RNA sequence: GGGAACGACUCGAGUAGAGUCGAAAAGCGGAGAUGUUCGCAUCUCCGCAAAUCCCUGGAUGCAGCGAGUUAAAACGGAUACGUUGGCAAGUAUCCAUCCCAAAAGUAUUAGCUUCGGCUAAUACAAGAGGCUAUAGAGGUUCGCCUCUAUAGCCUCAAAAGAAACAACAACAACAAC
Reactivity to 2A3 in 0.01 (KOAc 150mM, MgCl2 10mM, bicine 150mM(pH8.5), 24C), signal-to-noise 1, nucleotides 027 to 126: g000c020g010g000a020g000a000u000g010u030u130c180g000c150a000u010c000u000c000c020g000c010a020a010a000u010c000c000c000u020g050g000a020u050g060c040a010g040c040g000a040g060u040u140a070a190a050a020c070g040g020a050u070a090c020g050u070u120g160g000c050a110a020g000u020a010u020c000c040a020u070c020c000c000a050a150a000a020g020u020a020u000u020a020g020c000u020u050c240g070g000c000u010a010a010u030a010c000a000a060
Reactivity to DMS in 0.01 (KOAc 150mM, MgCl2 10mM, bicine 150mM(pH8.5), 24C), signal-to-noise 1, nucleotides 027 to 126: g000c010g030g000a000g000a010u010g020u010u010c230g030c010a010u000c000u020c000c000g040c010a000a030a070u010c000c030c000u000g000g000a060u000g000c060a090g000c020g030a060g010u000u000a050a050a100a060c180g000g000a070u010a030c060g010u010u000g030g020c180a070a120g010u000a020u000c020c020a060u000c000c000c010a040a070a090a090g000u000a000u000u000a010g000c010u000u030c170g070g000c020u000a020a030u000a000c010a110a130